[RMDB]
RNA sequence: GGGAACGACUCGAGUAGAGUCGAAAAUCCACUAUGAAUCUAGUCACUAAAUAAACACAAUUAGCUACUGUGUGUAAUAGUGAGUGUUGAUAAUACAAAAUAAUAGUAUAGUUUUGGAAGAUUAUACGCGCCCUUGCUCCGUUCGCGGAGCAAGGAACUAAGAAUACCUGUUCGCAGGUAUUCUUAGAAAAGAAACAACAACAACAAC
Reactivity to DMS in 0.01 (KOAc 150mM, MgCl2 10mM, bicine 150mM(pH8.5), 24C), signal-to-noise 2, nucleotides 027 to 156: u010c010c000a140c160u010a130u030g000a170a090u010c090u000a140g020u010c010a030c020u000a010a010a090u000a090a220a010c000a000c010a020a050u000u000a210g030c180u000a050c020u000g030u010g000u000g000u020a110a300u000a000g020u000g000a090g030u000g000u020u000g000a050u000a090a130u000a110c020a020a040a040a160u000a070a280u000a080g000u000a040u000a030g000u000u000u010u000g040g000a150a270g020a020u000u000a020u010a000c000g020c090g030c120c000c000u010u000g000c000u000c000c010g040u010u010c280g010c020g030g000a030g010c010a010a010g030g000a010a030
Reactivity to 2A3 in 0.01 (KOAc 150mM, MgCl2 10mM, bicine 150mM(pH8.5), 24C), signal-to-noise 3, nucleotides 027 to 156: u000c020c010a050c040u230a240u240g130a150a080u030c040u080a070g110u020c000a010c000u020a010a010a080u080a050a060a000c020a020c010a020a100u140u090a090g030c050u120a070c060u030g000u000g000u010g000u060a010a030u010a040g010u000g020a010g000u040g030u030u040g040a040u030a210a030u110a090c030a030a180a050a020u250a140a040u090a130g020u010a010u010a030g010u000u030u130u210g080g050a080a040g000a090u020u060a010u040a040c020g040c010g100c030c000c000u000u010g000c000u000c000c000g020u020u030c150g010c020g140g000a010g010c010a000a000g010g000a000a000
Structure probing data (DMS and 2A3) for a 207-nucleotide construct. For DMS, 3,145 sequencing reads were counted. The 2A3 profile rests on 1,869 reads. DMS adducts were read by reverse transcription with MarathonRT.